[RMDB]
RNA sequence: GGGAACGACUCGAGUAGAGUCGAAAAGAUAUGGAGGUAUAGUAGCAUCGAUCGUACGGCCUCGGAAACGAGGUUACGGGAGCUACGUACCUCCUAAGUCAAACAGACUCCGUUCGCGGAGUCUGAACACAGACUAAUGGUUCGCCAUUAGUCUGUGAAAAGAAACAACAACAACAAC
Reactivity to 2A3 in 0.01 (KOAc 150mM, MgCl2 10mM, bicine 150mM(pH8.5), 24C), signal-to-noise 2, nucleotides 027 to 126: g000a000u010a000u050g000g000a000g020g000u010a030u050a120g010u000a080g020c000a030u300c070g000a010u010c000g000u000a000c110g070g000c000c010u000c000g010g000a000a010a010c000g000a000g030g000u010u000a000c000g010g000g010a010g000c000u000a010c010g000u010a000c000c000u020c000c000u000a000a000g000u000c010a010a010a030c000a010g010a000c000u020c010c020g040u090u110c300g000c030g130g000a000g000u000c000u000g000a010a000
Reactivity to DMS in 0.01 (KOAc 150mM, MgCl2 10mM, bicine 150mM(pH8.5), 24C), signal-to-noise 5, nucleotides 027 to 126: g000a000u000a020u020g000g000a040g010g000u010a010u000a040g030u000a000g020c000a300u000c250g000a010u020c000g000u000a030c300g020g010c000c000u010c010g030g010a000a000a020c010g020a010g000g010u000u000a000c000g010g010g010a000g040c000u000a010c000g000u000a000c000c000u000c000c000u000a000a040g000u000c000a180a130a300c020a010g000a010c000u000c000c000g020u000u010c250g020c000g010g000a010g010u000c000u000g000a070a120

Source: RMDB library TTRDES, as collected in RNAgym. Chemical mapping of a 177-nucleotide RNA with 2A3 and DMS. The RNA was probed in 150 mM KOAc, 10 mM MgCl2 and 150 mM bicine (pH 8.5) at 24 C. Reactivities are rounded to 0.1 and cut off at 0 and 3. The 2A3 profile rests on 12,141 reads.